[RMDB]
RNA sequence: GGGAACGACUCGAGUAGAGUCGAAAACUCAACACGAUGGCGACGAACAUGCAGACGGGCAACCUGUACACGGACGCACUGAUUCAGAAGUCCAUGAUGGAACGUGCAGGCCCGAUGAUGGACACGCACAUGAAGGCCCGCUAUGCGUGGCAGCAAGCCAAUUAGAAACCUUCGGGUUUCUAAUUGGAAAAGAAACAACAACAACAAC
Reactivity to DMS in 0.01 (KOAc 150mM, MgCl2 10mM, bicine 150mM(pH8.5), 24C), signal-to-noise 2, nucleotides 027 to 156: c020u000c010a090a080c070a040c030g010a080u000g020g040c020g020a130c060g060a070a160c030a060u000g000c010a090g010a150c030g000g030g050c050a100a100c040c000u010g030u000a080c030a130c020g000g020a060c020g040c090a200c060u000g010a220u000u000c050a090g020a090a160g000u000c020c020a120u000g000a140u000g020g050a000a080c110g010u050g020c000a050g020g050c000c000c030g010a040u000g000a100u020g000g000a080c000a090c010g010c020a070c010a060u000g010a170a090g010g000c020c000c000g000c030u000a040u000g010c000g020u000g010g010c040a080g030c050a080a130g010
Reactivity to 2A3 in 0.01 (KOAc 150mM, MgCl2 10mM, bicine 150mM(pH8.5), 24C), signal-to-noise 5, nucleotides 027 to 156: c020u030c020a030a020c040a020c070g020a020u040g010g000c030g090a300c040g020a130a030c030a040u250g020c030a050g120a200c030g000g000g000c050a080a060c020c000u010g010u040a020c050a020c020g030g010a000c000g120c060a030c050u110g060a300u270u270c060a020g020a140a020g040u000c010c010a040u140g040a100u130g080g110a090a050c060g010u000g010c000a010g040g020c000c000c010g010a020u020g010a000u010g000g000a010c000a010c060g010c010a020c000a020u060g020a050a030g030g000c010c010c000g000c050u210a110u290g010c010g020u100g010g000c010a010g050c000a070a000g040